[RMDB]
The record gives the reactivity of an RNA of 177 nucleotides to 2A3 and DMS. For DMS, 900 sequencing reads were counted. Conditions: 150 mM KOAc, 10 mM MgCl2 and 150 mM bicine (pH 8.5), 24 C.

RNA sequence: GGGAACGACUCGAGUAGAGUCGAAAAGCUUUCCCGUGAGCGGGCGGGAUUCGAGGUGCGGGACGUACACUACACCCACUACGGGAGGAUGUGUCCCAUCGAGACACCGGAAGGGCCGAACAUCGGGGAUCCUCUACUCGUUCGCGAGUAGAGGAUCAAAAGAAACAACAACAACAAC
Reactivity to 2A3 in 0.01 (KOAc 150mM, MgCl2 10mM, bicine 150mM(pH8.5), 24C), signal-to-noise 1, nucleotides 027 to 126: g000c000u030u060u020c000c000c030g000u040g010a020g040c070g000g070g000c060g070g040g110a040u050u100c030g070a140g000g000u110g010c060g040g000g030a010c010g040u080a010c030a000c040u150a030c000a070c050c020c000a040c100u260a020c100g010g050g000a000g040g010a060u080g000u010g000u000c030c000c000a030u040c060g090a040g030a030c030a030c020c000g030g040a020a050g030g090g070c030c020g010a060a020c010a100u090c090g000g000g050
Reactivity to DMS in 0.01 (KOAc 150mM, MgCl2 10mM, bicine 150mM(pH8.5), 24C), signal-to-noise 1, nucleotides 027 to 126: g010c040u000u010u010c000c010c010g000u000g000a080g030c030g040g010g010c050g030g000g030a090u010u000c040g010a140g050g020u000g010c040g000g000g010a100c120g010u010a100c090a070c060u010a180c140a070c000c020c000a140c090u030a170c270g000g020g000a020g000g000a160u010g020u020g000u000c020c020c000a060u000c070g000a070g010a150c050a020c000c020g000g040a070a080g000g000g040c010c020g000a090a030c060a110u020c000g000g020g020